[RMDB]
RNA sequence: GGGAACGACUCGAGUAGAGUCGAAAAAGGUGUGGCUGCUGUGUCCCAUGUGGGUCAAUAGGUGGCAGAGAGGAGAAAGGCUAUGUCUUCGGUCUGUGUUCUGACCUAGGAACAUCUGAAUGAUUAGCGAAAAAGGAGUUUUCGAACUCCUUUUUCGAAAAGAAACAACAACAACAAC
Reactivity to DMS in 0.01 (KOAc 150mM, MgCl2 10mM, bicine 150mM(pH8.5), 24C), signal-to-noise 8, nucleotides 027 to 126: a040g010g010u000g020u000g000g020c010u000g010c050u000g010u010g000u000c010c010c020a160u020g020u020g010g010g010u010c040a070a090u030a080g010g010u000g000g010c020a050g000a090g010a090g000g000a050g020a070a050a080g000g000c030u020a040u020g000u000c040u000u000c060g010g000u020c040u020g010u000g010u000u000c030u010g000a080c070c050u010a110g000g000a050a040c040a040u010c040u010g010a070a070u020g000a110u000u010a090g010
Reactivity to 2A3 in 0.01 (KOAc 150mM, MgCl2 10mM, bicine 150mM(pH8.5), 24C), signal-to-noise 6, nucleotides 027 to 126: a020g090g000u080g020u050g040g010c010u020g000c010u020g040u020g040u090c020c000c010a030u150g110u100g050g010g010u030c010a030a060u100a130g060g010u050g020g020c040a010g030a000g010a010g080g030a030g060a030a120a000g070g000c070u080a040u100g050u010c000u020u010c020g030g030u010c040u050g050u000g030u040u060c060u060g070a140c020c020u020a040g010g010a050a010c000a030u060c060u060g040a060a050u050g050a080u080u130a050g060

An RNA of 177 nucleotides, treated with DMS and 2A3 and read out base by base. It was measured as part of the RMDB libraries RFM100 and RFMREP. The RNA was probed in 150 mM KOAc, 10 mM MgCl2 and 150 mM bicine (pH 8.5) at 24 C.